[RMDB]
This 177-nucleotide RNA was probed chemically with 2A3 and DMS. Source: RMDB library OK1LIB, as collected in RNAgym. Conditions: 150 mM KOAc, 10 mM MgCl2 and 150 mM bicine (pH 8.5), 24 C. High 2A3 reactivity points to a flexible backbone, as in loops and unpaired stretches. For DMS the reverse transcriptase was MarathonRT. For 2A3 the reverse transcriptase was SuperScript II with manganese.
RNA sequence: GGGAACGACUCGAGUAGAGUCGAAAAGAUGCAGAUAGAUGGCGGCGUAGGGCUGCAUCGAGCGGCUCACAUCGCAGAGCAGGAGCACCCGCCUGGGGCGUCGGCGGGGCCGGAUCCGUGCCAACAGCGUCUAGUGAUCGUUCGCGAUCACUAGACGAAAAGAAACAACAACAACAAC
Reactivity to 2A3 in 0.01 (KOAc 150mM, MgCl2 10mM, bicine 150mM(pH8.5), 24C), signal-to-noise 3, nucleotides 027 to 126: g040a000u100g010c030a000g060a090u080a060g150a090u130g090g000c010g020g000c040g040u070a170g010g060g000c000u020g000c000a060u100c080g040a020g030c020g010g000c010u020c030a030c030a060u070c020g020c050a010g020a020g020c030a040g010g030a030g020c040a110c020c000c000g030c040c010u060g010g000g020g010c040g010u040c030g020g000c010g000g000g000g000c040c010g010g000a010u000c040c020g050u050g040c010c010a030a050c020a090g040
Reactivity to DMS in 0.01 (KOAc 150mM, MgCl2 10mM, bicine 150mM(pH8.5), 24C), signal-to-noise 2, nucleotides 027 to 126: g040a000u040g000c020a010g020a080u030a080g000a110u020g000g000c010g020g010c070g000u010a040g010g000g010c000u000g010c020a030u050c240g000a140g040c040g000g010c010u000c030a070c080a040u000c020g000c030a030g000a170g060c030a070g010g000a130g020c040a240c040c100c010g010c010c040u000g030g050g010g000c010g000u000c080g010g000c070g000g000g000g040c050c070g030g010a060u020c000c020g000u060g000c020c120a050a100c130a130g000